[RMDB]
RNA sequence: GGGAACGACUCGAGUAGAGUCGAAAAUCGCCGUCUCGCAAACGGGCACUGGCUUCAGGAGAGGAUGUUCCAUGGCCGUAAGCGCAGGCACACCACAGUGCCUGCUAUCACGGCAUUAUCGCCAGCGCUGAGGUUCUGCGUUCGCGCAGAACCUCAGAAAAGAAACAACAACAACAAC
Reactivity to 2A3 in 0.01 (KOAc 150mM, MgCl2 10mM, bicine 150mM(pH8.5), 24C), signal-to-noise 1, nucleotides 027 to 126: u110c040g020c000c000g070u000c000u140c030g070c030a050a050a050c000g000g000g000c020a090c120u040g000g070c000u040u050c120a170g090g000a020g000a030g210g100a120u210g030u080u000c000c000a050u000g160g000c000c000g040u000a060a080g050c000g040c000a050g000g050c000a000c070a000c090c040a050c040a100g040u000g000c000c000u070g000c000u000a000u000c050a000c000g000g020c000a040u000u140a070u010c070g000c000c000a000g000c000g000
Description: Chemical mapping of a 177-nucleotide RNA with 2A3. The data come from the RNA Mapping Database (RMDB), library RFM100.